[RMDB]
The record gives the reactivity of an RNA of 177 nucleotides to 2A3 and DMS.
The 2A3 profile rests on 2,709 reads.
RNA sequence: GGGAACGACUCGAGUAGAGUCGAAAAAAAAAAGAUAUGGACUGGAACUACACGCCACUCACGCGUUGAAAUUUGGUCGGAAACGACCAAAUGGAGCGUGGAGCGUGCCAGUCCUAAGUCAAAAAAACAUACUAGCGUACUUCGGUACGCUAGUAUGAAAAGAAACAACAACAACAAC
Reactivity to 2A3 in 0.01 (KOAc 150mM, MgCl2 10mM, bicine 150mM(pH8.5), 24C), signal-to-noise 1, nucleotides 027 to 126: a000a000a000a000a050a120g030a010u080a060u080g010g020a010c000u010g000g000a050a030c050u200a040c280a010c020g080c040c010a270c060u100c000a030c020g000c010g180u300u010g000a010a000a010u000u000u000g000g010u000c040g000g040a080a010a010c000g010a000c000c000a000a000a010u000g000g010a030g020c000g010u010g010g000a010g010c000g000u010g010c010c000a000g000u040c000c010u000a000a010g000u010c060a090a000a030a020a000a000a090
Reactivity to DMS in 0.01 (KOAc 150mM, MgCl2 10mM, bicine 150mM(pH8.5), 24C), signal-to-noise 2, nucleotides 027 to 126: a000a030a030a070a030a090g000a040u000a300u000g010g000a020c000u000g000g000a100a020c070u000a290c000a010c000g000c040c110a200c110u010c000a000c000g020c000g020u000u010g000a080a080a030u000u000u000g000g000u000c020g010g000a080a030a040c000g010a000c010c000a010a000a000u000g030g010a080g000c000g020u000g010g020a100g000c010g000u000g020c030c000a010g000u000c000c000u000a010a060g000u030c030a000a000a060a090a040a090a110
It was measured as part of the RMDB library TTRDES.